[RMDB]
RNA sequence: GGGAACGACUCGAGUAGAGUCGAAAAUUUUGCCAGUUGGGGUAAGUCACAGCACCAGUUGAAGGAGAGGAUGUCGGAUGAAUAAGAGGAAGGGAGUGGACAAGGUGCUGGUCGUCCCAUUCCCAACCAUAUGGCUAGCCUUCGGGCUAGCCAUAUGAAAAGAAACAACAACAACAAC
Reactivity to DMS in 0.01 (KOAc 150mM, MgCl2 10mM, bicine 150mM(pH8.5), 24C), signal-to-noise 3, nucleotides 027 to 126: u010u020u010u010g000c040c010a190g000u010u010g000g000g000g010u040a050a060g020u020c070a050c050a060g000c020a010c020c010a120g020u040u010g000a120a060g000g000a090g000a070g000g010a100u010g010u030c090g000g010a120u030g040a080a050u060a050a060g020a110g000g000a130a080g000g000g000a050g000u030g000g000a110c040a110a080g000g010u000g000c010u000g000g010u000c060g020u000c000c010c010a200u000u000c000c000c030a100a060c230
Reactivity to 2A3 in 0.01 (KOAc 150mM, MgCl2 10mM, bicine 150mM(pH8.5), 24C), signal-to-noise 1, nucleotides 027 to 126: u020u000u080u060g050c000c010a050g040u100u140g070g000g000g030u080a060a230g030u040c090a000c000a250g020c010a040c030c000a030g030u150u130g030a120a040g060g020a080g000a020g080g030a100u090g060u060c080g040g110a170u080g020a040a100u160a120a000g080a000g010g070a130a000g070g070g000a180g000u080g050g010a030c110a140a080g000g000u030g000c000u000g030g000u130c000g000u040c000c000c080a010u050u050c010c000c000a000a040c000
This 177-nucleotide RNA was probed chemically with DMS and 2A3. For 2A3 the reverse transcriptase was SuperScript II with manganese. The data come from the RNA Mapping Database (RMDB), library OK1LIB.